[RMDB]
RNA sequence: GGGAACGACUCGAGUAGAGUCGAAAAUUUGUGAGGGGUGAGCGUUUGGUUGGGUGCGGUUGCAUUAUCUUGAAGGUUUGAUUAUAGUGGUGUGGUGCGCCUUUAGGUAGUGUUUUACCCUUGCGAGCUAUAUAAAUUAUUUCGAUAAUUUAUAUAGAAAAGAAACAACAACAACAAC
Reactivity to DMS in 0.01 (KOAc 150mM, MgCl2 10mM, bicine 150mM(pH8.5), 24C), signal-to-noise 1, nucleotides 027 to 126: u040u050u020g010u000g020a060g040g000g000g040u010g000a050g000c050g000u010u020u000g000g020u000u020g000g000g020u020g010c150g010g000u000u000g000c010a030u010u000a030u020c030u010u020g030a040a070g030g000u000u030u020g020a080u020u010a100u030a110g000u000g020g030u010g000u000g010g020u020g010c150g000c030c030u000u000u020a000g010g000u020a030g000u010g000u010u040u010u000a070c050c020c030u010u010g000c060g010a140g010
Chemical mapping of a 177-nucleotide RNA with DMS. The RNA was probed in 150 mM KOAc, 10 mM MgCl2 and 150 mM bicine (pH 8.5) at 24 C. In probing experiments dimethyl sulfate is read out at A N1 and C N3, which are open when not base-paired. Values are in units of 0.01, from 0 to 300, in steps of 10. It was measured as part of the RMDB library OK1LIB.